The record gives the reactivity of an RNA of 207 nucleotides to DMS and 2A3. The 2A3 profile rests on 4,081 reads. It was measured as part of the RMDB library M2RFPK.
RNA sequence: GGGAACGACUCGAGUAGAGUCGAAAAUAGCGAAGUAGGAUUUUAUGCGUCAAGUGUUCACAGGCUGGGGAGUCGCCGUGAAACGAAAAGCAGAAAGCGUGCUGCUUACGAUAUGAUUUCCGCACCCAUAAGAAGUCUCUGUUCGCAGAGACUUCAAUACGUAUAUCCUCUUCGGAGGAUAUACGUAAAAAGAAACAACAACAACAAC
Reactivity to DMS in 0.01 (KOAc 150mM, MgCl2 10mM, bicine 150mM(pH8.5), 24C), signal-to-noise 2, nucleotides 027 to 156: u000a060g040c090g010a050a100g060u000a070g000g000a080u000u000u010u010a050u020g000c010g020u000c070a060a300g040u000g000u000u000c000a050c040a090g020g020c030u000g000g020g020g000a110g030u000c040g000c050c070g010u010g010a020a030a090c040g000a200a070a040a080g050c000a040g000a040a040a090g020c130g020u000g030c000u000g000c010u000u000a100c020g020a100u000a050u000g000a220u000u000u000c020c000g020c050a170c030c020c010a140u000a120a180g010a020a010g020u000c010u000c010u000g000u000u000c290g060c020a010g000a010g000a030c000u000u010c000a020a160
Reactivity to 2A3 in 0.01 (KOAc 150mM, MgCl2 10mM, bicine 150mM(pH8.5), 24C), signal-to-noise 3, nucleotides 027 to 156: u130a010g040c040g060a060a010g050u100a080g020g040a030u030u040u030u050a040u080g030c030g020u040c070a080a070g020u050g060u210u010c030a020c070a100g020g000c030u090g030g010g020g020a050g090u100c040g020c010c000g020u020g010a020a010a000c010g020a010a120a000a000g000c010a000g070a060a150a010g120c130g060u130g030c010u010g000c010u020u010a010c010g020a020u020a020u100g020a030u020u000u010c000c000g000c030a040c010c040c000a040u080a100a080g010a010a000g000u000c000u010c000u010g040u070u060c130g010c090a000g000a000g000a000c000u000u000c000a000a000